Record summary:
Source: RMDB library RFM100, as collected in RNAgym. Chemical mapping of a 177-nucleotide RNA with DMS and 2A3.
RNA sequence: GGGAACGACUCGAGUAGAGUCGAAAAGGACCGAAAGGUAGCAGACAAAAGCCACCGCGCGGUGCAGUGGCCGGACUGCGCUUGUGAGUUGACACGUAUACACAGCCUUCUCAAUACCUUCAGACCAAUCUGCAUGAAUCUUCGGAUUCAUGCAGAUAAAAGAAACAACAACAACAAC
Reactivity to DMS in 0.01 (KOAc 150mM, MgCl2 10mM, bicine 150mM(pH8.5), 24C), signal-to-noise 3, nucleotides 027 to 126: g000g000a060c100c060g010a000a060a020g000g030u010a110g000c000a000g000a090c150a110a150a170a170g000c020c010a020c020c040g000c030g020c280g000g000u020g010c000a080g000u020g000g030c000c000g020g010a180c020u000g000c010g030c120u000u040g000u000g010a100g000u010u010g020a090c100a020c120g010u000a040u050a070c050a080c070a080g030c020c010u000u000c050u080c040a080a120u070a040c000c010u000u000c030a100g020a260c080c090a000
Reactivity to 2A3 in 0.01 (KOAc 150mM, MgCl2 10mM, bicine 150mM(pH8.5), 24C), signal-to-noise 3, nucleotides 027 to 126: g030g000a080c000c040g030a070a030a010g090g020u090a070g000c030a020g060a120c050a020a120a000a000g020c030c000a000c000c040g010c000g030c120g170g140u240g000c020a000g000u000g040g000c000c000g020g010a030c010u010g000c020g010c070u080u110g030u010g050a120g020u000u170g050a060c020a000c080g110u100a080u020a120c020a000c000a020g040c000c000u030u030c050u000c020a070a070u170a150c010c020u000u140c060a040g040a060c010c000a020
Background
The RNA was probed in 150 mM KOAc, 10 mM MgCl2 and 150 mM bicine (pH 8.5) at 24 C.